This 177-nucleotide RNA was probed chemically with 2A3 and DMS. The reactions ran in a buffer of 150 mM KOAc, 10 mM MgCl2 and 150 mM bicine (pH 8.5), at 24 C. For DMS, 1,967 sequencing reads were counted. The 2A3 profile rests on 1,898 reads. Values cover nucleotides 27 to 126.
[RMDB]
RNA sequence: GGGAACGACUCGAGUAGAGUCGAAAAACUCUUUGACAGUCCCCUUUGAACACAAACCAAGCAUAGAUGUUACUGAAAAAAUGGAGAACCAGUCCUGGGAUGCAGAAAGGAUAUUCAAGGAGGCUGACACUUUCUACGCAUUCGUGCGUAGAAAGUGAAAAGAAACAACAACAACAAC
Reactivity to 2A3 in 0.01 (KOAc 150mM, MgCl2 10mM, bicine 150mM(pH8.5), 24C), signal-to-noise 4, nucleotides 027 to 126: a010c070u080c070u060u140u110g110a070c020a010g080u100c000c010c000c000u040u090u200g050a060a000c040a010c030a140a150a010c050c030a070a000g060c000a010u050a080g070a120u090g000u130u230a120c060u130g190a080a050a000a050a070a160u120g050g000a100g020a110a040c080c010a020g020u030c000c000u100g000g030g080a000u060g000c000a000g140a110a130a030g050g040a040u070a110u140u010c000a020a000g010g000a020g000g040c040u060g040a020
Reactivity to DMS in 0.01 (KOAc 150mM, MgCl2 10mM, bicine 150mM(pH8.5), 24C), signal-to-noise 2, nucleotides 027 to 126: a070c110u010c010u000u010u030g000a240c130a040g040u000c030c000c000c050u030u000u000g000a080a100c100a100c070a190a130a040c050c070a140a120g010c040a080u000a080g000a100u050g000u000u050a060c030u050g020a000a000a060a070a090a070u000g000g020a080g000a070a080c140c100a000g000u030c070c020u000g000g000g000a050u010g040c050a000g000a070a000a170g020g000a170u040a150u070u000c050a000a000g000g000a090g000g000c000u000g040a300